[RMDB]
RNA sequence: GGGAACGACUCGAGUAGAGUCGAAAAAGCAGAAGACUUGAAGCUGUGUUAAGAAGUCAUCUUGUAGGCAGUGAGGAACCUUUGAAGGAUUUUCAACAGGAGAGUAUCUUGAUAAGAGUUCUCCUUCUGGAAAAUCUCUUGAUUCAUGGUGGAAAGAAGGUAUAAUCCGAUUCGUCGGAUUAUACCUAAAAGAAACAACAACAACAAC
Reactivity to DMS in 0.01 (KOAc 150mM, MgCl2 10mM, bicine 150mM(pH8.5), 24C), signal-to-noise 2, nucleotides 027 to 156: a030g040c010a040g050a100a030g010a040c000u000u010g010a070a050g010c040u000g020u000g020u000u000a080a080g020a080a030g020u000c020a030u000c100u000u000g010u000a150g050g020c150a110g000u000g030a020g020g000a070a100c040c010u020u010u010g000a050a080g020g000a040u000u000u000u000c010a010a110c050a040g000g000a030g020a090g040u000a080u000c020u000u000g030a190u000a150a200g020a080g010u000u000c010u000c010c010u010u000c050u000g020g000a030a010a030a000u000c010u010c030u000u020g010a130u000u000c050a120u000g020g000u010g020g010a180a110a140g000a110
Reactivity to 2A3 in 0.01 (KOAc 150mM, MgCl2 10mM, bicine 150mM(pH8.5), 24C), signal-to-noise 2, nucleotides 027 to 156: a000g010c010a000g000a030a000g010a040c000u010u040g010a030a000g000c070u080g020u040g040u200u040a080a020g000a010a010g010u010c010a010u070c050u100u110g050u050a090g080g040c060a000g010u000g050a000g000g020a030a020c000c010u020u060u160g070a050a030g010g010a000u000u000u030u000c050a110a080c010a110g020g000a000g000a000g010u070a210u210c010u020u060g040a050u070a270a030g030a020g010u020u000c000u000c010c020u010u050c010u040g010g020a000a030a000a000u000c040u040c010u050u070g050a080u120u030c040a030u130g030g000u040g030g070a100a090a020g080a010